[RMDB]
RNA sequence: GGGAACGACUCGAGUAGAGUCGAAAAUUACCGUGUAACAGCAGUUUAUAAAAUCUACUAGCGUUACUUGUUGGCAUGCGGUUAAAUCCAAGUGGGCAACAAAAGAAGCCAGCAAUCACUCAUUAUGGCCGGAUUUUAUAUUCGUAUAAAAUCCGGCAAAAGAAACAACAACAACAAC
Reactivity to 2A3 in 0.01 (KOAc 150mM, MgCl2 10mM, bicine 150mM(pH8.5), 24C), signal-to-noise 2, nucleotides 027 to 126: u120u020a060c000c000g070u020g000u070a060a020c040a110g000c060a000g010u000u220u040a250u020a220a180a000a040u080c070u040a020c080u040a070g000c000g010u030u060a070c070u050u040g020u040u000g050g050c060a090u080g070c060g000g040u030u040a050a140a000u030c020c000a060a100g010u070g090g010g140c020a100a000c020a010a170a000a020g090a020a000g010c010c000a020g000c040a000a050u100c000a110c030u140c040a100u090u210a070u300g050

This 177-nucleotide RNA was probed chemically with 2A3. The reactions ran in a buffer of 150 mM KOAc, 10 mM MgCl2 and 150 mM bicine (pH 8.5), at 24 C. Source: RMDB library OK1LIB, as collected in RNAgym.